[RMDB]
RNA sequence: GGGAACGACUCGAGUAGAGUCGAAAAUUGUGGGGAUCCACAUGAAACAAGGAAUAGCCUCUCAUGGUCAGAGGUCAAUGGAUGCUGCCGUUCUGAGGGUGGCUGCCACCACCUGAUGCAGGGUGCGGGUCCCUGUUGGAUUCGUCCAACAGGGACCAAAAGAAACAACAACAACAAC
Reactivity to DMS in 0.01 (KOAc 150mM, MgCl2 10mM, bicine 150mM(pH8.5), 24C), signal-to-noise 2, nucleotides 027 to 126: u000u010g040u000g010g000g000g040a100u010c030c000a010c060a050u000g000a150a110a130c080a170a200g010g000a140a130u000a220g050c020c000u030c000u000c030a140u010g020g000u000c250a000g000a060g020g000u000c100a110a110u000g010g010a110u000g010c060u000g060c030c000g010u000u000c100u000g000a300g000g010g010u000g010g000c020u020g020c270c100a070c020c040a040c010c090u000g000a140u000g020c180a080g000g020g000u000g000c070g000
Reactivity to 2A3 in 0.01 (KOAc 150mM, MgCl2 10mM, bicine 150mM(pH8.5), 24C), signal-to-noise 1, nucleotides 027 to 126: u130u020g020u020g000g020g000g200a120u070c020c010a000c020a020u050g100a000a110a050c090a060a050g060g010a160a190u080a100g090c000c000u000c010u000c060a160u180g130g000u160c050a000g030a010g070g000u080c040a060a080u090g070g020a060u150g000c100u020g020c010c010g150u150u040c050u030g030a030g030g000g050u010g040g000c090u080g070c040c010a020c010c000a010c000c130u020g000a010u100g030c080a030g060g000g000u070g040c020g040
Chemical mapping of a 177-nucleotide RNA with DMS and 2A3. Values are in units of 0.01, from 0 to 300, in steps of 10.